[RMDB]
RNA sequence: GGGAACGACUCGAGUAGAGUCGAAAACGUGCAGGCCGGCAACGGCGGCCUCGACGCCUCGGACAAGAACGCGCUGGCCACCGAACUGGCGCAGCGCGAGGACGAACUGCUGAACCUGCUCAACAGAAAAUACGUCGUACUUCGGUACGACGUAUUUAAAAGAAACAACAACAACAAC
Reactivity to DMS in 0.01 (KOAc 150mM, MgCl2 10mM, bicine 150mM(pH8.5), 24C), signal-to-noise 2, nucleotides 027 to 126: c150g010u000g030c010a000g040g020c210c010g000g000c060a060a200c200g020g000c010g050g000c070c100u010c150g010a180c070g000c020c050u000c020g000g020a110c090a080a150g020a070a150c060g020c020g020c010u000g010g000c000c010a020c110c050g000a040a190c170u000g020g010c000g010c020a030g000c020g000c000g000a030g000g000a100c020g010a130a180c120u000g000c000u000g020a080a100c030c000u000g000c010u000c050a170a100c120a100g000a170
Reactivity to 2A3 in 0.01 (KOAc 150mM, MgCl2 10mM, bicine 150mM(pH8.5), 24C), signal-to-noise 1, nucleotides 027 to 126: c050g010u020g030c010a000g000g000c010c020g000g060c020a060a020c000g010g020c000g000g020c020c050u080c040g110a090c010g050c000c010u050c070g090g070a030c040a100a120g050a300a070c040g010c010g010c000u000g000g010c000c000a050c020c080g040a070a040c050u030g000g040c160g050c140a020g000c000g020c000g000a000g000g000a010c020g010a060a050c050u050g000c000u010g020a030a030c000c000u000g030c030u040c050a070a200c050a040g180a080